An RNA of 207 nucleotides, treated with 2A3 and DMS and read out base by base.
[RMDB]
RNA sequence: GGGAACGACUCGAGUAGAGUCGAAAAGUAUUUAGCUUGAGAUAGCUAAAUCACCUCGGUAUGAUUAGGGUGAGACCUAGGAACGGUAGGGGUAUUCUCAAAGGAAGCUUUUGCAGUGACGCCCAUGAAAACGCGGAGACGUUCGCGUCUCCGCGAACAUAGACUAUGAGUUCGCUCAUAGUCUAUGAAAAGAAACAACAACAACAAC
Reactivity to 2A3 in 0.01 (KOAc 150mM, MgCl2 10mM, bicine 150mM(pH8.5), 24C), signal-to-noise 3, nucleotides 027 to 156: g090u080a020u010u000u000a000g000c000u000u040g020a030g000a120u120a040g010c000u010a010a000a000u010c010a030c000c000u030c050g020g030u180a080u190g090a110u180u080a030g030g000g030u040g080a080g020a020c000c020u020a010g060g030a050a050c050g010g040u070a040g000g010g000g000u020a060u060u050c040u000c000a050a030a010g060g010a040a030g020c010u050u070u080u120g000c060a020g010u020g030a020c080g010c000c000c000a030u100g080a050a110a040a010c020g010c010g030g010a000g010a010c020g050u070u120c230g020c000g050u020c010u000c000c010g000c000g000a000a000
Reactivity to DMS in 0.01 (KOAc 150mM, MgCl2 10mM, bicine 150mM(pH8.5), 24C), signal-to-noise 2, nucleotides 027 to 156: g030u000a010u000u000u000a000g020c000u000u030g010a280g000a160u000a020g020c010u000a020a010a010u010c010a040c040c010u000c010g000g010u000a070u000g010a230u010u000a090g000g000g040u000g010a240g010a130c030c010u000a080g040g010a140a090c110g030g010u000a080g000g010g020g000u000a050u000u010c040u010c080a060a090a150g010g010a070a120g010c040u010u000u000u000g010c070a100g000u010g020a180c030g020c000c010c020a100u000g000a050a040a050a150c030g020c010g010g000a070g000a020c040g050u010u000c280g010c030g000u010c010u000c010c000g010c010g010a000a060
The 2A3 profile rests on 2,367 reads. Conditions: 150 mM KOAc, 10 mM MgCl2 and 150 mM bicine (pH 8.5), 24 C. The data come from the RNA Mapping Database (RMDB), library M2RFPK.